[RMDB]
RNA sequence: GGGAACGACUCGAGUAGAGUCGAAAAAUGAUGAUCGUGUGCCAGUGAAUGACACGACCCAAUCACCGUGGGAUGCGGUUGGGCAACUGGAAACGGCCAGCGGCAAUUUAUGUACGGCGACGCUGAAAUUUAUAGGUCGGUUCGCCGACCUAUAAAUAAAAGAAACAACAACAACAAC
Reactivity to 2A3 in 0.01 (KOAc 150mM, MgCl2 10mM, bicine 150mM(pH8.5), 24C), signal-to-noise 1, nucleotides 027 to 126: a030u110g050a020u020g020a020u030c010g000u010g000u060g080c020c000a080g020u020g210a190a190u160g040a050c010a000c080g090a080c000c010c010a000a050u060c030a000c060c040g050u090g000g170g000a020u130g050c020g060g000u010u010g080g010g000c010a030a030c010u030g000g000a040a030a060c020g000g050c030c000a000g030c020g000g020c000a000a030u090u240u000a100u180g070u010a020c030g060g000c040g030a030c050g000c020u000g000a170a020
Reactivity to DMS in 0.01 (KOAc 150mM, MgCl2 10mM, bicine 150mM(pH8.5), 24C), signal-to-noise 3, nucleotides 027 to 126: a060u010g000a130u010g010a050u000c030g060u000g000u020g040c030c020a050g010u020g020a140a090u010g020a090c050a040c050g000a090c020c000c010a070a060u020c060a100c040c060g020u010g010g020g010a100u010g000c030g010g020u010u010g000g000g020c070a110a060c040u000g010g010a080a100a120c100g000g010c020c010a040g010c060g010g000c060a080a080u010u010u000a070u020g000u020a050c070g010g010c040g020a060c150g000c040u000g010a080a100

Notes: Structure probing data (2A3 and DMS) for a 177-nucleotide construct. The reactions ran in a buffer of 150 mM KOAc, 10 mM MgCl2 and 150 mM bicine (pH 8.5), at 24 C. For 2A3 the reverse transcriptase was SuperScript II with manganese. DMS adducts were read by reverse transcription with MarathonRT.